[RMDB]
RNA sequence: GGGAACGACUCGAGUAGAGUCGAAAAUUCCAGUUAAGUGUAUAAUUUGAUAAUCAUGGAGAAGUGCCUCAAUAUUUUGACGAAUGAUAUUAUUAAGUUUUUUACUACCUAAACUUCCUCCCAUGACCAUUCCUAUUGUCUUCGGACAAUAGGAAUGAAAAGAAACAACAACAACAAC
Reactivity to DMS in 0.01 (KOAc 150mM, MgCl2 10mM, bicine 150mM(pH8.5), 24C), signal-to-noise 2, nucleotides 027 to 126: u010u000c070c040a130g010u010u010a110a150g010u000g010u000a070u000a040a010u000u010u000g010a050u000a020a060u000c020a010u020g010g000a180g000a050a060g020u000g000c150c100u000c150a060a120u000a100u000u000u000u010g020a140c140g000a130a060u000g000a060u020a030u000u000a050u000u000a030a020g000u000u000u010u020u000u000a050c030u020a020c060c040u000a030a060a040c020u000u000c060c070u000c060c000c000a080u010g010a120c290
Reactivity to 2A3 in 0.01 (KOAc 150mM, MgCl2 10mM, bicine 150mM(pH8.5), 24C), signal-to-noise 1, nucleotides 027 to 126: u020u000c000c020a010g000u000u090a080a000g040u020g000u020a040u040a110a090u050u020u050g060a010u060a050a000u030c030a010u070g000g080a070g000a070a040g020u030g030c000c000u010c050a010a000u120a110u070u160u060u030g010a010c030g030a140a020u030g020a010u020a050u300u050a020u040u070a050a000g020u000u000u000u000u050u110a020c070u070a020c000c020u020a090a130a000c000u100u010c010c000u040c030c020c000a030u000g010a030c000